The record gives the reactivity of an RNA of 207 nucleotides to 2A3. The data come from the RNA Mapping Database (RMDB), library OK3TST.
RNA sequence: GGGAACGACUCGAGUAGAGUCGAAAAAUUAUUGCGAUAGGUAUAAUCAGGUCUACCUAUGCACAAAGUCUGCAUUUGAUCUUGCAGAAUCUAGUUAUCUUAUUAUGCUUUAUUCUAAUCAAACAAAUAAUAGUAGCCUGACAUUUCAUCCUGAACCUGCAUCUUGGAGAUUCGUCUCCAAGAUGCAAAAAGAAACAACAACAACAAC
Reactivity to 2A3 in 0.01 (KOAc 150mM, MgCl2 10mM, bicine 150mM(pH8.5), 24C), signal-to-noise 2, nucleotides 027 to 156: a010u250u110a120u070u030g010c070g040a010u020a030g020g010u000a060u040a040a070u090c000a000g000g040u050c040u000a000c040c030u010a010u030g000c020a000c020a080a240a010g080u060c020u000g000c000a040u060u110u290g100a090u100c080u080u000g000c000a000g050a010a020u020c010u030a030g080u060u090a120u060c030u070u100a130u100u090a040u210g030c000u050u070u220a060u210u040c040u150a100a010u120c060a060a000a190c020a080a190a060u130a080a040u060a090g030u020a030g020c010c040u000g040a040c020a030u140u280u160c040a070u030c010c000u010g070a070a050c040c000